[RMDB]
RNA sequence: GGGAACGACUCGAGUAGAGUCGAAAAUGCUUGGUUGAGCACCCGCAGACCUGAAGAUGAGUUGUAUAUUCAUCCAUCUGAUUUGGAUCGCUACAACCCCCAGAUGUUACCUCCUGGGCUGUUGGGUGCUCACAACCCAAUUCGUUGGGUUGUGAGCAAAAGAAACAACAACAACAAC
Reactivity to DMS in 0.01 (KOAc 150mM, MgCl2 10mM, bicine 150mM(pH8.5), 24C), signal-to-noise 2, nucleotides 027 to 126: u030g010c040u000u000g020g000u020u010g000a060g010c000a000c010c000c010g010c000a020g000a070c000c010u000g000a090a080g000a060u030g000a080g000u000u000g030u000a100u020a100u000u000c060a030u000c010c000a060u000c140u000g000a120u000u010u010g020g000a050u000c130g010c200u000a050c030a020a090c040c030c080c050c020a130g000a100u000g000u010u000a090c120c030u000c070c020u000g010g000g010c010u000g020u010u000g060g000g000u000